[RMDB]
RNA sequence: GGGAACGACUCGAGUAGAGUCGAAAAUAACUGGCGAAAAUAACUACGCUCUCGCUGCUUAAUCGAAGCACAGUAGAUUGAAGCUUAAUCCUUACACAAGGUGUUUGGACGAGACAUCACCCGGAAGCCGUGGCUUCGAGGCAAUCCGAACCGGUGGCACACAAAUAGGGUUCGCCCUAUUUGUGUGAAAAGAAACAACAACAACAAC
Reactivity to DMS in 0.01 (KOAc 150mM, MgCl2 10mM, bicine 150mM(pH8.5), 24C), signal-to-noise 2, nucleotides 027 to 156: u000a070a110c050u000g020g010c000g050a040a040a040a130u030a070a130c070u010a080c030g000c040u000c080u000c040g030c030u000g020c020u000u020a070a140u000c040g000a150a170g030c080a090c120a070g040u010a110g010a110u000u010g020a070a070g020c060u010u000a090a050u000c020c010u010u000a030c010a070c070a110a100g040g050u000g020u000u010u010g020g030a030c000g000a140g030a080c050a070u010c060a090c000c000c020g020g030a070a160g000c000c040g000u000g020g000c060u000u000c050g110a040g000g020c070a050a130u010c030c010g000a130a060c030c050g000g010u000g000g000
Reactivity to 2A3 in 0.01 (KOAc 150mM, MgCl2 10mM, bicine 150mM(pH8.5), 24C), signal-to-noise 4, nucleotides 027 to 156: u110a010a050c090u070g030g000c030g080a090a050a030a070u190a100a030c100u140a040c100g010c010u040c000u010c030g060c090u040g010c010u090u120a070a030u040c020g020a010a010g070c070a090c110a180g140u160a030g010a140u070u180g180a050a010g000c000u020u010a010a030u010c000c010u010u030a000c030a010c100a160a110g230g000u020g000u000u010u010g010g010a010c010g000a000g010a010c020a060u030c010a020c010c020c000g010g000a040a020g010c020c010g000u020g080g000c020u030u040c020g020a030g000g010c010a010a060u030c000c010g010a020a060c060c010g000g000u030g020g060

Conditions: 150 mM KOAc, 10 mM MgCl2 and 150 mM bicine (pH 8.5), 24 C. An RNA of 207 nucleotides, treated with DMS and 2A3 and read out base by base. For DMS the reverse transcriptase was MarathonRT.